[RMDB]
Record summary
This 177-nucleotide RNA was probed chemically with DMS. For DMS, 1,852 sequencing reads were counted. Conditions: 150 mM KOAc, 10 mM MgCl2 and 150 mM bicine (pH 8.5), 24 C.
RNA sequence: GGGAACGACUCGAGUAGAGUCGAAAAUUGUCCGCGGUGGCGGCGGAAUUCGCCAAACGCGAGGUGAGCAUCGCCGAGGUGCGCCAGGAGGGCGUUGUGGACGAAGGUGGUCGACGGGUGGGAGCCCCAGCCUACUAGGGUUCGCCCUAGUAGGCUGAAAAGAAACAACAACAACAAC
Reactivity to DMS in 0.01 (KOAc 150mM, MgCl2 10mM, bicine 150mM(pH8.5), 24C), signal-to-noise 2, nucleotides 027 to 126: u010u000g030u000c020c030g000c020g040g020u010g010g030c020g000g000c060g000g020a070a170u010u000c020g020c030c030a040a080a070c100g000c040g000a100g000g010u000g010a110g000c080a020u010c030g020c180c100g020a230g030g000u000g010c060g010c030c030a110g020g020a190g020g000g000c050g020u000u010g010u000g010g010a060c060g010a070a050g010g030u000g010g030u010c070g010a070c110g010g020g030u000g000g010g010a150g000c050c020c040